RNA sequence: GGGAACGACUCGAGUAGAGUCGAAAACAUAGAGAAUAUUGAAGUGUUUAGAGACCUCUCAUGCUCCUGUUAGCAUUGGAAUACUAUACAGCAAUUAAAAGGGAAGGUAGCUAAGAUUGCAACAUGACAUCGUUAAGCUUUUCGAAGCUUAACGAUGAAAAGAAACAACAACAACAAC
Reactivity to DMS in 0.01 (KOAc 150mM, MgCl2 10mM, bicine 150mM(pH8.5), 24C), signal-to-noise 3, nucleotides 027 to 126: c060a080u010a090g010a180g000a080a130u010a050u000u020g010a080a150g000u000g030u000u000u020a060g010a150g000a050c050c030u000c010u020c040a060u000g020c080u010c140c060u000g000u000u000a010g000c080a090u000u010g030g020a130a150u000a080c030u000a030u010a020c060a050g030c110a060a080u000u020a030a060a100a110g000g000g000a100a030g000g000u000a010g040c020u000a030a080g010a050u000u000g030c050a050a060c110a020u000g000a190
Reactivity to 2A3 in 0.01 (KOAc 150mM, MgCl2 10mM, bicine 150mM(pH8.5), 24C), signal-to-noise 3, nucleotides 027 to 126: c020a020u160a030g110a000g090a200a030u160a120u210u090g030a090a040g040u010g030u080u090u030a040g030a020g040a060c020c000u000c000u000c000a010u040g010c030u020c010c030u040g080u110u040a010g000c030a050u010u100g060g060a070a050u050a110c000u040a030u070a120c040a020g040c020a010a080u110u070a150a160a050a050g020g010g030a080a100g060g010u050a000g010c010u040a040a030g050a070u070u140g020c020a040a020c010a070u080g060a030
Chemical mapping of a 177-nucleotide RNA with DMS and 2A3. For 2A3 the reverse transcriptase was SuperScript II with manganese. It was measured as part of the RMDB library OK2TST. The 2A3 profile rests on 1,994 reads. For DMS, 1,979 sequencing reads were counted. For DMS the reverse transcriptase was MarathonRT.